[RMDB]
RNA sequence: GGGAACGACUCGAGUAGAGUCGAAAAAAUGAAUCCUCACUUCUCCGAAACCCGGUUUCAUUGAGUGUCUUGCGGUUUUUCUGCACCCAGGUGGGGAGCAGAGACAGGGUCAAGUGUGGGCUGGGCUGGGCAGGGAGAGUGCUACCCCAGCCCGCCCCACCUCCAAACACUUCGGUGUUUGGAGGUGAAAAGAAACAACAACAACAAC
Reactivity to 2A3 in 0.01 (KOAc 150mM, MgCl2 10mM, bicine 150mM(pH8.5), 24C), signal-to-noise 2, nucleotides 027 to 156: a010a000u170g050a010a030u020c010c020u020c030a050c020u080u110c070u040c060c030g060a100a090a100c060c030c050g040g040u040u060u060c120a120u110u160g070a040g080u090g040u020c040u090u080g110c090g050g050u010u040u000u050u030c000u010g000c010a040c020c000c020a080g150g170u270g170g090g000g030a060g000c000a000g000a010g010a010c030a050g030g090g040u120c040a060a020g050u040g000u050g080g010g010c080u150g020g000g000c000u020g010g010g010c010a030g020g060g040a090g020a040g070u100g050c020u050a040c000c000c010c000a010g000c000c000c000g000c010c000c000